This 207-nucleotide RNA was probed chemically with DMS and 2A3. For 2A3, 7,906 sequencing reads were counted.

RNA sequence: GGGAACGACUCGAGUAGAGUCGAAAAGAAGCUUUCGAGCUUCGAGAAGGGGUCUUUACAGGUGCGAGGCUUUUGACGGACUGAAGCCUCCACGGUCCGAUAAGCUACCCACCGCACCGUAAAGACGGAGGCACCCAUAUUUAGCUUUCGAGCUAAAAAUGCAUUGUUAAUUCGUUAACAAUGCAUUAAAAGAAACAACAACAACAAC
Reactivity to DMS in 0.01 (KOAc 150mM, MgCl2 10mM, bicine 150mM(pH8.5), 24C), signal-to-noise 3, nucleotides 027 to 156: g010a010a000g000c000u000u000u000c210g030a040g040c000u010u020c000g000a130g010a130a110g000g020g030g010u000c000u000u010u000a040c010a140g020g020u000g000c020g010a190g000g000c010u000u000u000u010g020a200c050g030g000a070c010u000g000a050a130g000c000c000u010c020c020a150c030g010g000u000c000c000g000a240u000a030a030g000c000u000a050c050c010c050a300c040c020g010c000a010c000c000g030u000a020a030a040g000a040c010g010g010a060g030g020c020a070c020c010c010a110u010a100u000u000u000a010g010c000u000u000u000c220g010a090g060c010u010a000a020a030
Reactivity to 2A3 in 0.01 (KOAc 150mM, MgCl2 10mM, bicine 150mM(pH8.5), 24C), signal-to-noise 7, nucleotides 027 to 156: g000a000a010g010c020u050u110u150c190g060a010g010c000u010u000c020g010a070g050a050a100g100g060g020g000u000c000u020u040u020a050c150a200g030g000u070g000c030g030a130g050g040c040u050u060u130u230g230a120c060g000g000a000c000u010g020a070a010g010c000c000u010c000c010a020c010g000g000u000c000c000g010a040u020a120a000g000c020u060a120c050c130c090a060c080c020g000c000a000c000c000g000u000a010a000a000g000a000c000g000g000a000g000g000c000a020c000c000c000a040u080a090u160u020u010a010g000c010u090u160u090c300g120a010g000c010u050a000a040a020

It was measured as part of the RMDB library RNAMAK.